[RMDB]
RNA sequence: GGGAACGACUCGAGUAGAGUCGAAAAUUAUUUUUUUCGUCAUUGUGUCAUCAUCAAUGUUAAGGGUCUUUUUCUUUGUCGGGAAAAAGACCGUUGAUCACGGCCUGUGAAUGGCAAUCAAGCCACCCGGACAUUUCCAAUUCGUUGGAAAUGUCCGAAAAGAAACAACAACAACAAC
Reactivity to 2A3 in 0.01 (KOAc 150mM, MgCl2 10mM, bicine 150mM(pH8.5), 24C), signal-to-noise 3, nucleotides 027 to 126: u040u030a190u040u040u040u000u000u010u080c040g000u000c000a020u010u010g070u010g040u130c010a020u010c000a010u000c000a060a100u080g120u080u260a100a070g090g030g000u000c000u000u000u000u000u000c030u030u100u170g240u220c120g030g010g030a030a000a000a000a000g010a000c000c000g010u000u000g000a020u050c040a000c130g030g000c010c000u020g000u010g070a060a030u010g040g000c050a010a090u120c070a120a020g030c000c000a010c000c010
Reactivity to DMS in 0.01 (KOAc 150mM, MgCl2 10mM, bicine 150mM(pH8.5), 24C), signal-to-noise 1, nucleotides 027 to 126: u070u010a040u020u000u000u000u000u000u000c020g020u000c000a000u000u020g000u030g000u000c040a110u000c300a060u020c050a060a090u010g000u060u040a160a080g010g030g030u000c000u000u000u000u000u040c000u010u010u030g000u040c300g000g020g010a010a000a000a070a000g000a000c000c000g040u000u010g000a100u000c130a160c120g040g000c090c020u040g020u030g010a060a110u040g000g030c000a080a060u060c200a070a070g030c020c050a070c050c010
This 177-nucleotide RNA was probed chemically with 2A3 and DMS. DMS adducts were read by reverse transcription with MarathonRT. The data come from the RNA Mapping Database (RMDB), library RFM100. For 2A3 the reverse transcriptase was SuperScript II with manganese. High 2A3 reactivity points to a flexible backbone, as in loops and unpaired stretches.